RNA sequence: GGGAACGACUCGAGUAGAGUCGAAAAUUAUUAAUGAUUGUAUUAGCACUUGUAUGUCAUCAUUACUUCAGAAUGACCAUCAAGAACAGUCUUAGGCGUUCCUUGAGAGUGAUGGGAUUUGCUCCCCCACGUAAAUUCACUUCGGUGAAUUUACGUGAAAAGAAACAACAACAACAAC
Reactivity to DMS in 0.01 (KOAc 150mM, MgCl2 10mM, bicine 150mM(pH8.5), 24C), signal-to-noise 2, nucleotides 027 to 126: u010u010a090u010u000a040a070u010g000a060u000u000g000u010a120u010u020a070g030c170a150c170u020u010g020u010a040u020g000u000c040a030u000c010a040u010u010a080c130u010u000c260a060g000a070a010u000g000a100c010c010a070u010c120a010a030g000a070a180c130a080g010u000c000u000u000a040g000g020c040g010u010u000c000c030u000u000g000a080g010a090g030u010g030a070u000g010g000g000a060u000u010u000g010c060u000c030c030c010c080
Reactivity to 2A3 in 0.01 (KOAc 150mM, MgCl2 10mM, bicine 150mM(pH8.5), 24C), signal-to-noise 1, nucleotides 027 to 126: u070u030a050u040u080a050a050u140g020a020u170u000g030u040a230u150u110a060g040c060a010c080u020u080g040u040a000u130g130u030c000a050u010c010a040u100u210a290c060u080u090c030a080g030a200a080u030g060a300c030c000a080u070c010a010a000g040a020a080c000a050g140u000c000u010u020a000g080g000c070g030u020u000c000c000u060u040g100a080g000a020g060u050g040a080u030g070g000g050a050u020u010u130g000c040u090c040c000c050c000